Overview: The data come from the RNA Mapping Database (RMDB), library OK2TRN. This 177-nucleotide RNA was probed chemically with DMS. Reactivities are given for positions 27 through 126. The DMS profile rests on 1,604 reads.

[RMDB]
RNA sequence: GGGAACGACUCGAGUAGAGUCGAAAAAGAGGCCAACCAGAUCUCUUGGUUUUCCUGAGCUCUGCUCCUGCCUUUGCCUCCCCAGGAACCUGGUUUCUGACAAGCAGGACUCACUGGCUCAGUGUGCAUAUGGGCGAGUAUUCGUACUCGCCCAUAUAAAAGAAACAACAACAACAAC
Reactivity to DMS in 0.01 (KOAc 150mM, MgCl2 10mM, bicine 150mM(pH8.5), 24C), signal-to-noise 2, nucleotides 027 to 126: a110g000a060g020g000c040c180a080a100c160c080a100g020a130u000c020u000c050u000u000g020g010u010u000u000u000c040c000u000g010a000g020c010u000c140u010g020c300u000c010c030u000g000c010c050u000u000u010g000c000c020u000c020c030c050c020a100g000g000a070a050c070c090u000g010g000u000u020u000c050u000g000a110c120a060a060g000c020a020g020g000a060c180u010c160a060c110u000g010g040c000u000c020a050g020u000g010u000g010c140
The reactions ran in a buffer of 150 mM KOAc, 10 mM MgCl2 and 150 mM bicine (pH 8.5), at 24 C. Reactivities are rounded to 0.1 and cut off at 0 and 3.